This 177-nucleotide RNA was probed chemically with DMS and 2A3.
For DMS, 1,302 sequencing reads were counted.
Conditions: 150 mM KOAc, 10 mM MgCl2 and 150 mM bicine (pH 8.5), 24 C.

[RMDB]
RNA sequence: GGGAACGACUCGAGUAGAGUCGAAAAGAAUAAAUAGGGAGGUCAGGGUCAGCAGACCGCCGCUGAACCCAGGAUAACCCUCAAUGUCGGCGGUCUAAGCGACGAAAGACAGAGACACGUCGCAAAGAUCAGCGUACCAUUUCGAUGGUACGCUGAUAAAAGAAACAACAACAACAAC
Reactivity to DMS in 0.01 (KOAc 150mM, MgCl2 10mM, bicine 150mM(pH8.5), 24C), signal-to-noise 1, nucleotides 027 to 126: g000a020a010u000a030a130a170u040a030g000g000g040a080g010g000u010c050a020g010g000g060u000c000a000g010c080a070g000a000c030c000g020c070c000g000c000u000g000a060a000c000c000c000a100g000g000a100u030a000a110c120c000c000u000c240a000a000u080g020u040c160g000g080c000g000g000u000c000u000a070a250g010c000g000a000c000g000a130a050a120g030a140c180a030g000a080g000a040c090a170c010g000u000c040g000c000a040a000a160g000
Reactivity to 2A3 in 0.01 (KOAc 150mM, MgCl2 10mM, bicine 150mM(pH8.5), 24C), signal-to-noise 1, nucleotides 027 to 126: g040a040a000u300a180a040a030u200a050g060g010g040a260g000g100u020c100a040g000g050g000u030c000a000g040c000a000g000a000c000c000g090c000c000g000c000u000g000a030a080c000c000c170a010g090g080a000u050a180a200c010c030c000u010c020a060a090u210g080u300c110g000g000c000g000g000u000c000u000a020a000g000c000g040a000c000g110a020a020a130g020a060c090a020g090a010g000a060c000a000c020g000u000c000g000c030a000a010a010g020
For DMS the reverse transcriptase was MarathonRT.